[RMDB]
RNA sequence: GGGAACGACUCGAGUAGAGUCGAAAAGAGUGAGGGAAGAUAGCCGAGAUUAGCGGGUGGGCUGCAGCCGGGGCAGUCGCCCGAAUGGGCGGGACCCCACGGAGUUAGCGAGAGGAUGCGAACAGCGCCCAUUCUUACUGUUCGCAGUAAGAAUGGGAAAAGAAACAACAACAACAAC
Reactivity to 2A3 in 0.01 (KOAc 150mM, MgCl2 10mM, bicine 150mM(pH8.5), 24C), signal-to-noise 9, nucleotides 027 to 126: g110a020g030u110g030a100g030g020g020a070a050g060a160u150a060g050c020c030g080a090g020a150u130u150a060g070c030g000g050g030u110g100g040g000c020u020g000c000a030g010c010c020g000g000g010g000c020a020g040u040c010g010c000c000c000g020a060a080u160g010g010g000c000g000g030g040a100c000c010c010c010a010c030g030g000a060g030u130u130a030g030c030g020a040g010a020g120g020a050u080g010c020g020a060a050c030a060g070c020g030
Reactivity to DMS in 0.01 (KOAc 150mM, MgCl2 10mM, bicine 150mM(pH8.5), 24C), signal-to-noise 7, nucleotides 027 to 126: g000a090g020u000g010a110g010g000g010a110a080g000a100u030a090g020c040c030g010a110g000a120u010u030a090g010c050g010g000g000u010g010g010g010c060u000g010c050a090g000c040c040g000g000g000g000c060a070g000u020c030g020c000c010c000g010a050a020u050g000g010g010c010g000g020g000a230c130c010c000c020a080c090g000g000a080g000u010u010a070g000c040g000a100g010a080g000g000a060u010g000c020g010a080a070c130a120g010c150g010